[RMDB]
RNA sequence: GGGAACGACUCGAGUAGAGUCGAAAAGAUAUGGAAAGCUGGAGCUCCUGUAGCCAACGAGUGCGUGUAUAUCGGAAACGAUAUACACGCACUCGGGCUACCUGAGCGUUGAAAGCUUUCCUAAGUCGAUUCAUAAAUAGUUCGCUAUUUAUGAAUCAAAAGAAACAACAACAACAAC
Reactivity to DMS in 0.01 (KOAc 150mM, MgCl2 10mM, bicine 150mM(pH8.5), 24C), signal-to-noise 3, nucleotides 027 to 126: g010a110u010a300u010g000g010a010a010a010g010c000u000g010g000a140g010c020u010c000c040u000g000u000a010g010c000c010a100a170c040g010a040g070u000g000c000g030u000g010u000a000u000a000u000c000g010g000a160a100a230c000g030a000u000a010u000a010c000a000c010g030c000a000c000u000c010g010g000g000c000u000a010c000c040u000g000a010g050c000g010u010u010g000a130a130a050g000c000u000u000u000c000c000u000a020a090g010u000c100
Description
Source: RMDB library TTRINS, as collected in RNAgym. Structure probing data (DMS) for a 177-nucleotide construct. The reactions ran in a buffer of 150 mM KOAc, 10 mM MgCl2 and 150 mM bicine (pH 8.5), at 24 C. The DMS profile rests on 4,857 reads.